[RMDB]
RNA sequence: GGGAACGACUCGAGUAGAGUCGAAAACGCCAAUCAAAUCGAUUUAGCUAUAGAAUCAUCAGGUGCUAAAGUUACGAUUGGUCAAAUAUUGACGCUACCUAAAAAAGGUGGCGAGGUGGUAUUACUCGCCAGUGACACGGUUCGCCGUGUCACUGGCAAAAGAAACAACAACAACAAC
Reactivity to 2A3 in 0.01 (KOAc 150mM, MgCl2 10mM, bicine 150mM(pH8.5), 24C), signal-to-noise 3, nucleotides 027 to 126: c010g000c020c010a020a010u020c080a060a110a120u080c080g150a160u020u030u030a000g000c000u110a060u050a300g160a270a110u080c040a080u090c090a090g160g300u120g020c000u020a000a000a010g040u080u160a000c120g000a000u000u020g030g000u000c000a000a210a000u180a090u040u160g040a010c000g000c000u000a030c000c010u220a290a180a040a030a090a000g000g000u000g020g000c030g000a030g000g070u040g000g030u070a120u080u080a100c040u030c050
Reactivity to DMS in 0.01 (KOAc 150mM, MgCl2 10mM, bicine 150mM(pH8.5), 24C), signal-to-noise 1, nucleotides 027 to 126: c300g000c060c000a040a010u000c000a090a080a110u000c300g060a020u000u000u000a000g000c000u000a230u190a110g000a150a140u030c190a030u000c140a040g000g020u000g010c000u000a000a000a000g000u000u000a030c150g050a020u000u000g030g000u000c160a060a050a050u000a060u010u010g000a080c000g020c000u030a000c000c000u020a000a030a300a130a180a000g000g030u000g000g000c000g010a000g020g010u020g030g060u000a030u000u040a040c200u000c150
Chemical mapping of a 177-nucleotide RNA with 2A3 and DMS. For DMS the reverse transcriptase was MarathonRT. It was measured as part of the RMDB library OK1LIB. For DMS, 1,173 sequencing reads were counted. Conditions: 150 mM KOAc, 10 mM MgCl2 and 150 mM bicine (pH 8.5), 24 C.